Structure probing data (2A3 and DMS) for a 177-nucleotide construct.
The RNA was probed in 150 mM KOAc, 10 mM MgCl2 and 150 mM bicine (pH 8.5) at 24 C.
The DMS profile rests on 2,111 reads.
DMS adducts were read by reverse transcription with MarathonRT.
RNA sequence: GGGAACGACUCGAGUAGAGUCGAAAAGCAAAACUUAAAUAACCUUCCGUUAAUAAACUUUUGAGUAAUGGGUGAUCAGGAUAAUGAGUUUGUAACACAACUUCGCCCUGUUUUUCUGCUCUUCCUGAUCGUCUCCUAUAUUCGUAUAGGAGACGAUAAAAGAAACAACAACAACAAC
Reactivity to 2A3 in 0.01 (KOAc 150mM, MgCl2 10mM, bicine 150mM(pH8.5), 24C), signal-to-noise 3, nucleotides 027 to 126: g010c010a020a000a010a170c050u150u170a120a100a090u080a180a100c020c030u120u100c080c030g040u020u040a040a040u100a080a230a150c020u070u070u040u070g040a020g030u070a130a120u180g080g000g020u060g040a030u050c040a030g080g000a040u070a190a110u210g010a020g030u050u100u080g030u130a090a000c030a000c010a140a040c020u100u100c030g030c010c000c000u000g030u010u060u000u040u000c020u040g020c000u010c040u000u000c000c000u010g030
Reactivity to DMS in 0.01 (KOAc 150mM, MgCl2 10mM, bicine 150mM(pH8.5), 24C), signal-to-noise 3, nucleotides 027 to 126: g030c090a060a060a090a160c160u010u030a080a090a110u000a060a040c050c100u010u010c180c130g010u000u000a060a080u010a060a100a120c040u000u000u000u000g000a020g020u010a100a070u020g010g010g010u000g010a030u000c040a020g010g020a090u010a090a100u000g000a060g000u000u000u000g010u010a130a100c180a160c070a010a020c000u000u010c080g020c120c010c020u000g010u010u000u000u000u000c050u010g010c030u000c010u000u000c000c000u000g020